[RMDB]
RNA sequence: GGGAACGACUCGAGUAGAGUCGAAAAUGGUUAUUGUGGAGGUAAUUAUACAUUUGGUCUGAAACCAAAUAAAGUUUUGCCCUCCUGCCCUGUCGGGCAUCAUAUUUACCUCAUUGACCAAGAGAGAAGUGAUUAAAUUAUUCGUAAUUUAAUCACUAAAAGAAACAACAACAACAAC
Reactivity to 2A3 in 0.01 (KOAc 150mM, MgCl2 10mM, bicine 150mM(pH8.5), 24C), signal-to-noise 9, nucleotides 027 to 126: u080g010g020u090u040a140u160u300g210u260g230g030a010g010g000u020a020a030u070u070a070u030a120c070a040u010u010u010g030g010u040c140u240g160a220a070a020c010c010a000a000a010u110a030a090a030g030u050u050u100u070g010c000c000c000u050c000c010u050g030c010c000c010u070g070u110c110g000g000g000c000a010u050c030a000u030a070u060u030u020a010c000c000u000c020a020u000u050g010a010c000c010a060a020g090a000g010a010g040a270
Reactivity to DMS in 0.01 (KOAc 150mM, MgCl2 10mM, bicine 150mM(pH8.5), 24C), signal-to-noise 6, nucleotides 027 to 126: u020g000g000u000u000a030u020u010g020u010g000g010a020g000g010u000a000a010u010u010a050u010a120c180a030u000u000u000g000g010u000c100u060g020a150a160a080c010c000a000a000a010u000a080a100a140g000u010u020u010u010g000c030c010c000u010c100c030u010g000c040c040c030u010g000u020c200g000g000g010c000a000u000c140a030u010a020u000u000u000a020c010c000u000c010a090u010u000g010a030c010c020a060a110g020a140g010a140g000a180